[RMDB]
The record gives the reactivity of an RNA of 177 nucleotides to 2A3 and DMS.
RNA sequence: GGGAACGACUCGAGUAGAGUCGAAAAGACAAAGUCCGUUCUUGAACGGACUAGGUGGUCCACACCGGUGUUUCGGACAGCGGUUCGAUUCCGCUCAGCUCCAUUCUCCCUUCGGGGCUGCAAUGGUCCUUGGACAGAAGUUCGCUUCUGUCCAAGGAAAAGAAACAACAACAACAAC
Reactivity to 2A3 in 0.01 (KOAc 150mM, MgCl2 10mM, bicine 150mM(pH8.5), 24C), signal-to-noise 2, nucleotides 027 to 126: g120a010c110a030a190a000g000u000c000c000g000u020u030c090u130u300g120a030a010c000g000g000a000c000u020a010g030g010u090g000g020u070c090c000a070c010a010c030c020g060g050u080g000u030u040u050c010g010g040a050c000a010g000c000g000g000u010u050c040g010a000u060u000c010c000g000c000u030c020a000g000c000u000c010c000a010u100u010c060u070c060c000c000u030u110c070g000g000g010g000c000u000g000c020a060a120u120g080g000u000
Reactivity to DMS in 0.01 (KOAc 150mM, MgCl2 10mM, bicine 150mM(pH8.5), 24C), signal-to-noise 2, nucleotides 027 to 126: g000a100c090a090a020a020g000u000c000c000g020u030u000c070u020u000g020a020a010c000g000g000a000c000u000a000g000g000u010g010g000u000c110c060a240c050a080c000c000g010g060u010g010u020u000u040c060g000g030a160c050a040g000c010g020g070u030u020c120g000a300u000u000c010c030g020c000u010c040a000g000c010u000c000c000a120u030u010c050u010c040c010c020u000u040c240g000g000g010g030c080u000g000c260a120a080u010g030g010u000
The reactions ran in a buffer of 150 mM KOAc, 10 mM MgCl2 and 150 mM bicine (pH 8.5), at 24 C. DMS adducts were read by reverse transcription with MarathonRT. It was measured as part of the RMDB libraries RFM100 and RFMREP.